[RMDB]
RNA sequence: GGGAACGACUCGAGUAGAGUCGAAAAAUAAAUAUCAGUUAUAUGACUGACGGAACGUGGAAUUAACCACAUGUAGUAUAACGAUGACAAUGCCGACCGUCUGGGCGUUGCAUCCGCUCCAAAAAAAGAUUUAGUAUUCCUUCGGGAAUACUAAAUCAAAAGAAACAACAACAACAAC
Reactivity to DMS in 0.01 (KOAc 150mM, MgCl2 10mM, bicine 150mM(pH8.5), 24C), signal-to-noise 2, nucleotides 027 to 126: a080u020a070a040a070u000a120u000c010a110g010u010u020a040u000a010u000g000a070c080u020g040a030c030g010g000a140a100c140g010u000g020g000a160a160u000u010a120a130c030c010a020c000a140u010g000u000a100g010u000a020u000a020a070c040g010a010u000g000a160c020a020a010u000g010c000c010g010a120c000c050g010u000c030u010g000g000g020c000g050u000u000g000c010a070u000c050c070g010c030u000c020c020a000a000a030a100a070a080a060